[RMDB]
RNA sequence: GGGAACGACUCGAGUAGAGUCGAAAAGCGCAGAAGCGCCGGCCAAAUACUUGCAAGUAGCCCGUAGUAAUACGUAGGGCGCGAUCGUUGUCCGGAUUUGUUGGGCGUUAAGAGCUUCGCAGGUGGCAAUAAUAUUUAUUUUCGAAUAAGUAUUAUUAAAAGAAACAACAACAACAAC
Reactivity to 2A3 in 0.01 (KOAc 150mM, MgCl2 10mM, bicine 150mM(pH8.5), 24C), signal-to-noise 3, nucleotides 027 to 126: g000c010g000c020a030g070a300a050g030c010g000c000c000g010g010c020c000a020a050a030u120a040c000u000u050g000c040a060a020g000u010a020g040c000c000c000g000u020a020g040u050a040a180u080a120c060g050u150a100g020g000g000c000g000c000g020a020u100c040g050u090u140g050u020c000c010g130g090a160u080u030u090g060u010u060g040g000g000c010g000u000u010a060a030g010a010g070c010u040u040c080g010c030a010g010g010u020g020g020c010
Reactivity to DMS in 0.01 (KOAc 150mM, MgCl2 10mM, bicine 150mM(pH8.5), 24C), signal-to-noise 9, nucleotides 027 to 126: g010c020g010c040a130g020a130a140g010c010g010c010c050g000g010c020c020a090a100a120u030a040c010u000u000g020c030a080a080g000u010a150g010c010c010c000g010u010a210g000u040a110a070u010a080c040g010u040a300g010g010g010c000g010c050g000a090u030c080g010u010u000g010u010c020c010g000g010a110u030u010u000g010u010u010g000g000g010c030g020u010u020a070a110g000a140g010c010u000u010c110g010c020a020g000g010u000g000g010c060